[RMDB]
RNA sequence: GGGAACGACUCGAGUAGAGUCGAAAAGAUAUGGAUCGAACUACGCUCGUCAUUCUCAUCGAUCUCGGAAACGAGGGAGAGAAUGGCUUGGCGCGAUCCUAAGUCAAAAGUCUCCUUCGGGAGACAACGAACAAAUGCUGUUCGCAGCAUUUGUUCGAAAAGAAACAACAACAACAAC
Reactivity to DMS in 0.01 (KOAc 150mM, MgCl2 10mM, bicine 150mM(pH8.5), 24C), signal-to-noise 2, nucleotides 027 to 126: g020a010u000a300u010g030g000a020u010c020g000a070a040c120u000a300c020g000c010u010c300g010u000c000a000u000u000c000u000c000a270u010c150g010a020u000c000u000c000g010g000a110a110a080c010g010a000g000g000g000a010g010a000g020a000a010u000g020g000c000u000u000g000g050c010g000c020g010a020u000c000c000u010a030a090g010u000c050a170a100a130a090g000u000c000u000c000c000u000u010c190g000g000g000a050g000a010c010a010a090
Reactivity to 2A3 in 0.01 (KOAc 150mM, MgCl2 10mM, bicine 150mM(pH8.5), 24C), signal-to-noise 1, nucleotides 027 to 126: g000a000u080a000u170g010g010a000u020c050g000a080a060c150u220a050c300g010c010u010c020g020u030c000a000u020u000c020u000c020a230u300c050g020a050u000c010u020c020g020g030a080a040a030c040g010a000g010g000g020a030g000a010g000a010a000u010g000g000c000u040u260g000g000c020g000c020g010a000u000c010c000u000a160a010g030u000c030a020a000a100a140g000u020c000u000c000c010u030u130c270g140g010g000a010g010a000c010a000a010
About this RNA: This 177-nucleotide RNA was probed chemically with DMS and 2A3. The reactions ran in a buffer of 150 mM KOAc, 10 mM MgCl2 and 150 mM bicine (pH 8.5), at 24 C. For DMS the reverse transcriptase was MarathonRT.